Chemical mapping of a 177-nucleotide RNA with DMS and 2A3.
For 2A3, 1,140 sequencing reads were counted.
It was measured as part of the RMDB library OK1LIB.
Conditions: 150 mM KOAc, 10 mM MgCl2 and 150 mM bicine (pH 8.5), 24 C.
DMS adducts were read by reverse transcription with MarathonRT.
[RMDB]
RNA sequence: GGGAACGACUCGAGUAGAGUCGAAAAACGCAAUGAUUGUUCUCGACGCCCGUGCACCAGUGACAACAUCAUGUAAAUCGUUUUCACUAUCAAAGUUGAAUAACGCCUGUAUCACCGUACCUGGUGAGCCCGGUUAGGUAUUCGUACCUAACCGGGCAAAAGAAACAACAACAACAAC
Reactivity to DMS in 0.01 (KOAc 150mM, MgCl2 10mM, bicine 150mM(pH8.5), 24C), signal-to-noise 1, nucleotides 027 to 126: a070c020g000c110a170a190u000g000a050u000u000g000u000u000c130u000c010g000a100c090g000c050c000c000g050u100g000c160a070c020c000a000g020u020g000a000c000a000a170c150a000u000c050a030u070g100u050a300a250a150u000c040g040u000u010u000u000c080a100c060u000a030u000c200a110a130a060g000u040u040g000a030a030u050a010a020c110g040c040c000u000g000u060a030u000c030a050c010c060g000u000a080c260c100u000g000g070u000g010a020
Reactivity to 2A3 in 0.01 (KOAc 150mM, MgCl2 10mM, bicine 150mM(pH8.5), 24C), signal-to-noise 3, nucleotides 027 to 126: a000c100g020c050a060a050u200g080a180u000u080g000u180u020c020u020c040g010a020c050g010c000c010c030g000u020g000c040a020c030c000a010g020u010g050a020c000a070a020c060a040u130c020a020u070g260u300a000a000a150u050c060g000u000u010u010u010c010a010c040u030a090u240c160a240a020a020g030u120u160g040a020a010u190a190a000c010g040c000c010u160g000u110a090u060c000a000c040c010g020u050a110c040c040u030g080g030u010g010a000